[RMDB]
RNA sequence: GGGAACGACUCGAGUAGAGUCGAAAAUGGUUUAAAGGUCGAAAAAUGAAAUUUUAACUACGAGGCAUAGCUCAGAAGGAAGAGCAAGGACCUUCUAAGUCCUAGGUCGUAGGUUCGAUCCCUACUGCCUCGACCAAUUAAGUGAGGAAAAUAUGAAAGACAAUACCAUUUUCGAAUGGUAUUGUCUAAAAGAAACAACAACAACAAC
Reactivity to DMS in 0.01 (KOAc 150mM, MgCl2 10mM, bicine 150mM(pH8.5), 24C), signal-to-noise 2, nucleotides 027 to 156: u000g030g020u000u000u010a040a050a100g000g040u000c030g000a040a070a040a070a120u000g000a120a060a140u010u000u010u000a010a060c020u010a100c030g020a010g050g010c010a070u000a090g030c020u040c040a060g010a070a050g030g010a080a090g000a030g040c000a180a060g000g000a070c020c060u000u050c200u000a120a090g010u000c010c010u000a040g010g010u010c090g010u000a010g000g010u000u000c050g000a300u000c090c000c000u000a040c020u000g000c000c010u000c000g010a040c040c010a020a080u000u010a020a060g030u000g000a040g010g000a060a060a000a090u000a030u000g020a140a150
Reactivity to 2A3 in 0.01 (KOAc 150mM, MgCl2 10mM, bicine 150mM(pH8.5), 24C), signal-to-noise 3, nucleotides 027 to 156: u070g000g030u030u040u070a040a020a010g010g010u040c080g110a060a070a060a050a070u100g050a100a060a090u130u140u100u080a060a070c070u110a050c040g000a000g000g000c000a000u000a010g000c000u000c060a030g040a080a030g140g080a070a000g000a000g000c010a010a000g020g010a000c010c000u110u060c110u130a050a030g000u000c000c000u000a020g000g010u060c000g000u000a000g000g000u030u030c010g000a010u040c000c000c000u010a010c000u000g000c000c000u000c010g000a000c000c000a000a010u100u070a050a010g010u030g070a030g040g060a040a040a050a060u190a090u140g080a160a100

The record gives the reactivity of an RNA of 207 nucleotides to DMS and 2A3. For 2A3, 2,011 sequencing reads were counted.